Chemical mapping of a 207-nucleotide RNA with DMS and 2A3. For 2A3, 5,002 sequencing reads were counted. DMS adducts were read by reverse transcription with MarathonRT. Reactivities are rounded to 0.1 and cut off at 0 and 3. Values cover nucleotides 27 to 156.
RNA sequence: GGGAACGACUCGAGUAGAGUCGAAAACUCUUUGUGCAUGGCACCAUCGCCGAGUCCCACUGGAAGGCAUGACGCCAAAGGAAAUGGUUGCGGAGUACGGUCCCAGCCUGCUGGAUGGCGGUAAGACGUUCUCUAGCGCAUACGGCAGUGAGCAGGACCGUAUAGGGAAAUUCGUUUCCCUAUACGGAAAAGAAACAACAACAACAAC
Reactivity to DMS in 0.01 (KOAc 150mM, MgCl2 10mM, bicine 150mM(pH8.5), 24C), signal-to-noise 4, nucleotides 027 to 156: c030u000c040u010u000u000g020u010g000c050a190u010g000g010c000a100c020c040a070u000c070g020c030c020g000a140g020u000c020c050c050a170c120u000g040g020a120a110g030g000c020a100u000g010a090c110g060c040c020a030a120a170g010g000a080a090a080u000g030g010u000u010g000c040g020g000a200g010u000a050c050g010g010u000c020c000c010a120g010c030c020u000g010c020u000g010g000a120u000g010g010c010g040g010u010a100a110g010a220c050g010u000u000c090u000c080u010a120g030c030g030c040a130u000a060c040g010g000c010a050g010u010g000a120g000c020a120g020g000a140
Reactivity to 2A3 in 0.01 (KOAc 150mM, MgCl2 10mM, bicine 150mM(pH8.5), 24C), signal-to-noise 6, nucleotides 027 to 156: c030u030c050u050u090u140g080u070g030c110a140u090g060g000c020a030c040c010a090u060c100g000c020c030g030a050g080u030c050c030c010a060c070u100g030g080a120a080g040g000c040a030u080g030a040c060g010c020c030a040a070a040g090g020a100a140a100u110g040g000u060u080g000c050g030g010a020g020u080a060c060g050g060u050c010c000c000a000g010c000c020u020g010c030u040g030g070a100u100g050g070c000g000g020u040a040a010g080a050c050g040u130u010c040u000c020u060a050g030c010g000c040a030u040a090c030g030g000c020a020g010u020g100a020g000c040a030g040g050a020